This 177-nucleotide RNA was probed chemically with DMS and 2A3. For DMS, 1,030 sequencing reads were counted. Source: RMDB library M2PK50, as collected in RNAgym. Reactivities are given for positions 27 through 126. Conditions: 150 mM KOAc, 10 mM MgCl2 and 150 mM bicine (pH 8.5), 24 C. 2A3 adducts were read by reverse transcription with SuperScript II with manganese.
RNA sequence: GGGAACGACUCGAGUAGAGUCGAAAAGAAACAUGGUUCGCCAUGUUUCAAAGUAGCUCAUAAUGACGCAAACAACGGCGUCGCCGUGAGCAAACGGCGAAAAAAGACUUAUCUUCGGAUAAGUCAAGACCACGAAGUGGUUCGCCACUUCGUGGUCAAAAGAAACAACAACAACAAC
Reactivity to DMS in 0.01 (KOAc 150mM, MgCl2 10mM, bicine 150mM(pH8.5), 24C), signal-to-noise 2, nucleotides 027 to 126: g000a030a020a000c000a000u000g010g020u010u030c240g040c010c000a020u010g000u000u000u000c000a030a070a110g060u000a170g000c000u010c010a040u000a040a100u020g020a010c000g000c010a020a050a120c280a050a050c210g080g000c000g050u000c000g010c140c100g010u000g000a000g000c070a040a050a060c000g000g000c130g010a000a020a060a060a180a080g000a000c000u010u020a050u000c000u000u020c250g030g010a040u000a000a000g010u000c000a040a040
Reactivity to 2A3 in 0.01 (KOAc 150mM, MgCl2 10mM, bicine 150mM(pH8.5), 24C), signal-to-noise 2, nucleotides 027 to 126: g000a010a000a000c010a000u000g030g020u050u090c150g020c070c010a000u020g000u010u000u000c010a000a000a000g050u030a020g030c030u010c040a080u020a170a090u190g010a010c000g000c010a030a190a300c060a160a130c190g070g020c000g030u000c010g020c000c010g020u050g010a010g030c020a010a070a020c020g050g020c000g130a090a000a000a000a020a060g010a000c010u000u000a000u020c000u030u040c240g130g000a000u000a010a020g000u000c000a000a010